The record gives the reactivity of an RNA of 207 nucleotides to 2A3 and DMS. Reactivities are given for positions 27 through 156. The RNA was probed in 150 mM KOAc, 10 mM MgCl2 and 150 mM bicine (pH 8.5) at 24 C. For 2A3, 1,989 sequencing reads were counted. It was measured as part of the RMDB library M2RFPK.
RNA sequence: GGGAACGACUCGAGUAGAGUCGAAAAAGCAGGAGUACGCUCCUGCAUGGGUAGACGAAUUGACCCCAACUGAAGUUCAAUUCUAACGUUAAAAGGAGUUUUAUAUGACUGGGCGUACGCGUCCAGAUGACGAUUUCAUUCUUCGGAAUGAAAUCAACGCUAUAAAUAUGUUCGCAUAUUUAUAGCGAAAAGAAACAACAACAACAAC
Reactivity to 2A3 in 0.01 (KOAc 150mM, MgCl2 10mM, bicine 150mM(pH8.5), 24C), signal-to-noise 3, nucleotides 027 to 156: a000g010c000a000g000g010a000g000u060a030c200g050c130u000c000c000u000g000c000a000u000g020g000g020u160a130g060a210c080g000a020a000u010u010g010a010c020c020c010c020a090a090c180u300g040a030a000g020u070u010c000a010a000u020u000c030u080a120a050c110g060u110u230a060a060a030a020g120g030a130g030u070u100u090u060a190u040a080u160g100a060c010u000g000g010g000c000g030u030a030c210g000c000g120u000c010c000a010g000a020u050g060a020c110g000a000u000u010u000c000a010u000u010c000u020u030c080g050g000a000a010u010g000a000a000a000u010c000a000a010
Reactivity to DMS in 0.01 (KOAc 150mM, MgCl2 10mM, bicine 150mM(pH8.5), 24C), signal-to-noise 1, nucleotides 027 to 156: a120g050c010a020g010g000a060g050u000a080c300g080c030u010c000c000u000g000c020a020u000g000g010g050u000a100g000a170c130g020a080a020u000u000g000a070c020c000c000c010a090a300c150u020g020a040a050g020u020u000c010a020a050u000u010c010u010a070a130c060g020u000u000a090a030a090a170g000g010a170g050u000u020u010u020a070u000a090u040g010a130c020u010g020g000g020c000g070u000a060c220g040c000g000u000c000c010a020g000a010u000g010a090c130g000a050u000u000u000c000a030u000u000c000u000u030c300g030g000a030a020u000g000a010a000a010u010c000a110a080